[RMDB]
An RNA of 177 nucleotides, treated with 2A3 and DMS and read out base by base. For 2A3, 916 sequencing reads were counted. Values are in units of 0.01, from 0 to 300, in steps of 10. The reactions ran in a buffer of 150 mM KOAc, 10 mM MgCl2 and 150 mM bicine (pH 8.5), at 24 C.
RNA sequence: GGGAACGACUCGAGUAGAGUCGAAAAAGGCAUUGGCGGAGCUCUUCGACAAGAAAUUCGAGGAAGAAUGAAGUGGCUAUCCCUCUCUCUGGGAGUACUCAUCCUCCUUUCGGCAUGUAGCCAUCCGCCCCUUACCGUUUUUCGAAACGGUAAGGGGAAAAGAAACAACAACAACAAC
Reactivity to 2A3 in 0.01 (KOAc 150mM, MgCl2 10mM, bicine 150mM(pH8.5), 24C), signal-to-noise 1, nucleotides 027 to 126: a000g060g000c100a070u110u150g000g030c000g020g000a000g040c000u020c010u030u020c040g040a030c030a130a050g040a160a140a040u170u090c030g020a000g060g000a080a020g030a020a050u100g000a070a070g040u010g070g000c010u080a120u130c000c040c000u000c010u010c000u100c060u020g010g040g000a020g040u000a020c010u000c040a080u020c060c110u070c000c010u030u130u060c040g030g010c020a030u100g110u140a010g060c020c010a020u020c000c020g100
Reactivity to DMS in 0.01 (KOAc 150mM, MgCl2 10mM, bicine 150mM(pH8.5), 24C), signal-to-noise 1, nucleotides 027 to 126: a030g020g000c080a130u000u000g000g060c010g010g050a060g000c060u000c050u000u000c030g000a250c220a120a080g000a000a130a110u000u000c180g010a050g000g000a080a050g000a010a040u000g010a090a120g010u000g000g000c050u000a070u000c050c000c010u000c170u050c100u000c080u000g000g020g000a000g030u000a050c060u000c200a110u000c050c000u000c040c050u000u000u000c090g020g000c230a060u010g050u000a010g000c060c010a130u050c030c080g000